[RMDB]
RNA sequence: GGGAACGACUCGAGUAGAGUCGAAAAUGAGCGCGAGGUCGGCCUUGACGAUGCCCCAGUGGUCGAGGAUCAGGGCAUUGGUGAUGACGGUGUCGGCCACUUCUUCGGCCAACCUUUGGCCCUGACCAAAUCCAAGUGAAUUCGUUCACUUGGAUUUAAAAGAAACAACAACAACAAC
Reactivity to 2A3 in 0.01 (KOAc 150mM, MgCl2 10mM, bicine 150mM(pH8.5), 24C), signal-to-noise 9, nucleotides 027 to 126: u170g010a030g030c060g000c030g040a040g010g060u060c030g030g020c000c000u050u090g040a050c040g050a040u090g030c010c000c000c010a040g040u060g080g020u040c040g050a060g030g030a150u030c020a020g000g020g000c010a010u010u040g040g010u080g040a160u120g030a060c100g040g080u150g050u120c030g010g010c010c010a030c020u140u100c020u080u110c060g020g000c010c000a010a020c030c010u020u030u060g080g040c000c000c000u020g010a010c000c000
Reactivity to DMS in 0.01 (KOAc 150mM, MgCl2 10mM, bicine 150mM(pH8.5), 24C), signal-to-noise 9, nucleotides 027 to 126: u020g000a100g010c040g000c060g000a090g010g010u010c060g010g000c020c020u010u010g010a080c070g000a100u010g000c050c010c020c090a110g020u010g010g010u010c030g000a090g010g000a170u000c030a040g010g000g010c020a030u000u000g000g000u000g010a110u020g010a070c070g010g010u020g010u010c060g020g010c020c010a060c110u020u010c110u010u020c140g000g000c010c020a160a050c050c020u000u010u010g020g010c000c000c020u000g000a060c090c040